[RMDB]
RNA sequence: GGGAACGACUCGAGUAGAGUCGAAAAUGCUGAGCUUUCGAGCUCAGCAGAGGCAAGCAAGCAGCGCAACGAGACAAGACGAGCAUAAGAUCGAGCAUCCUACAAUACGGCACUUCGGUGCCGUAAAUAACAAUACUGUGUUCGCACAGUAUUGUUAAAAAGAAACAACAACAACAAC
Reactivity to DMS in 0.01 (KOAc 150mM, MgCl2 10mM, bicine 150mM(pH8.5), 24C), signal-to-noise 7, nucleotides 027 to 126: u000g000c000u010g010a010g010c000u000u000u010c160g010a010g030c000u000c000a010g020c010a000g010a070g010g020c060a060a080g000c080a070a070g000c040a040g010c060g010c050a040a060c070g010a090g010a050c070a040a060g010a070c080g000a050g010c050a050u000a070a090g010a070u000c040g010a050g010c050a090u000c010c020u000a060c210a090a130u000a010c000g000g000c000a000c000u000u000c170g010g010u000g010c000c000g000u000a000a030a080
Reactivity to 2A3 in 0.01 (KOAc 150mM, MgCl2 10mM, bicine 150mM(pH8.5), 24C), signal-to-noise 5, nucleotides 027 to 126: u030g000c000u000g000a000g000c000u050u060u180c230g100a010g000c000u000c000a010g000c000a000g010a010g030g020c040a020a070g020c010a030a030g020c010a010g020c030g010c050a030a040c030g050a020g040a070c040a060a020g060a040c030g030a020g010c020a040u070a160a070g040a080u040c020g010a010g010c010a030u040c000c010u020a050c020a040a060u040a050c010g000g000c010a000c000u050u050c240g060g010u020g000c010c000g000u000a000a000a000
The record gives the reactivity of an RNA of 177 nucleotides to DMS and 2A3.
It was measured as part of the RMDB library M2PK50.
Conditions: 150 mM KOAc, 10 mM MgCl2 and 150 mM bicine (pH 8.5), 24 C.
For 2A3, 9,382 sequencing reads were counted.
The DMS profile rests on 9,995 reads.
2A3 adducts were read by reverse transcription with SuperScript II with manganese.
DMS adducts were read by reverse transcription with MarathonRT.